[RMDB]
RNA sequence: GGGAACGACUCGAGUAGAGUCGAAAACACAGUUCUCCGAUUCCAAUUUUCCGCAAGGAAUGUCAUCGCGACCGCCCCGCCGGUGUCUGGACACCCGCAGUACGUCGCAGCUUCGAUCCCGUAUCGGAAUUUAGCCUCACUUCGGUGAGGCUAAAUUAAAAGAAACAACAACAACAAC
Reactivity to DMS in 0.01 (KOAc 150mM, MgCl2 10mM, bicine 150mM(pH8.5), 24C), signal-to-noise 3, nucleotides 027 to 126: c140a100c240a100g000u010u010c000u020c000c030g040a080u040u020c010c050a080a120u010u020u010u000c010c010g010c080a100a110g010g000a070a020u050g020u020c050a070u010c080g010c050g000a050c020c070g020c040c100c030c010g000c000c030g000g040u000g010u020c080u060g040g050a080c090a040c050c030c020g000c050a030g020u020a280c200g020u000c040g000c000a140g000c060u000u000c010g000a100u020c000c010c040g000u030a030u070c060g040g010
Reactivity to 2A3 in 0.01 (KOAc 150mM, MgCl2 10mM, bicine 150mM(pH8.5), 24C), signal-to-noise 2, nucleotides 027 to 126: c070a000c050a050g030u040u030c010u030c040c030g050a040u040u000c010c020a100a080u080u010u080u000c030c010g060c030a040a010g060g000a030a020u050g020u060c070a070u100c040g010c020g030a040c010c000g070c010c000c010c010g000c010c040g040g000u010g000u010c060u060g090g030a060c020a050c010c020c020g030c000a010g050u040a020c060g020u000c020g020c050a020g000c010u090u080c080g080a100u010c040c020c000g010u060a080u130c040g010g040

The record gives the reactivity of an RNA of 177 nucleotides to DMS and 2A3. The reactions ran in a buffer of 150 mM KOAc, 10 mM MgCl2 and 150 mM bicine (pH 8.5), at 24 C. Reactivities are rounded to 0.1 and cut off at 0 and 3.